[RMDB]
RNA sequence: GGGAACGACUCGAGUAGAGUCGAAAAGAUGUUCUCCACUGCUAGGGUCAGAGAGCGUCGUGUCGAGCGCAGCAAAGCCAAGACGCCACACACAUCCAAUACGGCGCUGCCACGCGGGCAGCCUGCCAGGAUACUAACGUUUCGACGUUAGUAUCCUAAAAGAAACAACAACAACAAC
Reactivity to 2A3 in 0.01 (KOAc 150mM, MgCl2 10mM, bicine 150mM(pH8.5), 24C), signal-to-noise 8, nucleotides 027 to 126: g070a020u100g010u020u020c030u010c010c020a050c050u070g070c080u110a100g080g040g050u070c040a010g020a010g010a010g100c010g020u030c010g010u020g040u060c060g030a040g030c040g000c040a080g010c040a120a100a030g040c040c020a050a000g050a030c030g010c020c000a030c000a000c000a000c010a050u050c030c030a040a040u120a130c070g010g000c020g000c010u010g010c000c000a090c080g160c070g040g020g000c000a010g010c000c010u020g010c010c020
Reactivity to DMS in 0.01 (KOAc 150mM, MgCl2 10mM, bicine 150mM(pH8.5), 24C), signal-to-noise 4, nucleotides 027 to 126: g020a030u020g000u000u000c040u010c000c210a120c070u000g010c120u030a110g010g000g000u000c100a070g010a060g010a070g010c030g010u000c050g020u000g030u030c030g000a160g020c050g020c050a120g010c090a040a090a140g000c040c060a080a100g010a070c060g010c010c000a060c060a040c090a040c140a090u010c020c030a110a110u020a110c110g010g000c030g000c000u000g020c000c010a090c080g070c120g020g010g000c030a010g020c070c060u040g020c060c070

The data come from the RNA Mapping Database (RMDB), libraries RFM100 and RFMREP. Chemical mapping of a 177-nucleotide RNA with 2A3 and DMS. Reactivities are given for positions 27 through 126. 2A3 is a SHAPE reagent: it acylates the 2'-hydroxyl of flexible nucleotides of all four kinds.